[RMDB]
RNA sequence: GGGAACGACUCGAGUAGAGUCGAAAACUGCGACACUGUCAAAUUGCCUGGACAUCCCGCUACGCUGAGGAGACCGUCUGAUUGGGGAAACCUGAUCGGACACCGACGGUGAAAGCCGUCGGGUAUGGUAACACUUCCUCGGCUAGGGACUAUGGGCCCAAAGAAGGUAGUUCGCUACCUUCUUUGGAAAAGAAACAACAACAACAAC
Reactivity to 2A3 in 0.01 (KOAc 150mM, MgCl2 10mM, bicine 150mM(pH8.5), 24C), signal-to-noise 1, nucleotides 027 to 156: c020u150g050c040g060a050c060a060c300u180g010u150c050a030a080a210u180u080g000c000c000u000g000g000a000c000a010u030c000c010c010g000c070u030a000c040g010c000u000g000a000g010g000a000g000a000c010c020g000u000c000u000g010a000u000u000g030g000g010g010a040a000a000c000c010u000g010a000u000c000g000g000a010c000a000c000c000g020a000c010g050g000u000g000a010a000a000g010c040c000g010u000c020g010g000g000u050a130u040g000g000u000a000a000c000a000c020u020u000c000c010u000c000g000g000c010u000a000g010g000g010a010c010u030a170u100g000g000g000c000